[RMDB]
RNA sequence: GGGAACGACUCGAGUAGAGUCGAAAAGAUAUGGACAAUCCUCAAGGGAGUGCCAGUUUCGGAAACGAAACGCACGAAGAACUUGAGGAGUUGUCCUAAGUCAAAGUCGUGCCUUCGGGCACGACAACCUUAACAUCACGUUCGCGUGAUGUUAAGGAAAAGAAACAACAACAACAAC
Reactivity to 2A3 in 0.01 (KOAc 150mM, MgCl2 10mM, bicine 150mM(pH8.5), 24C), signal-to-noise 4, nucleotides 027 to 126: g020a030u070a040u140g010g000a010c010a010a030u020c010c010u000c020a010a020g060g030g000a080g010u020g050c150c200a120g040u030u000u000c010g000g030a110a060a050c010g010a000a020a010c010g000c000a010c020g170a220a040g020a040a030c010u020u020g000a020g000g000a010g010u010u020g020u000c000c000u010a110a010g040u010c050a150a060a120g020u000c000g000u000g000c000c000u030u100c300g060g000g000c000a000c000g010a000c000a000a000
Reactivity to DMS in 0.01 (KOAc 150mM, MgCl2 10mM, bicine 150mM(pH8.5), 24C), signal-to-noise 5, nucleotides 027 to 126: g010a040u000a300u010g010g000a010c010a030a070u010c000c010u000c000a010a020g010g000g010a090g000u000g010c030c300a220g020u000u000u000c000g000g000a160a130a260c010g000a000a000a010c000g010c010a010c000g000a090a120g010a080a150c000u000u000g010a020g000g000a000g020u010u000g010u000c000c000u000a010a100g000u010c050a070a120a130g010u000c000g020u000g000c010c010u000u000c290g010g000g020c010a000c000g010a000c000a030a050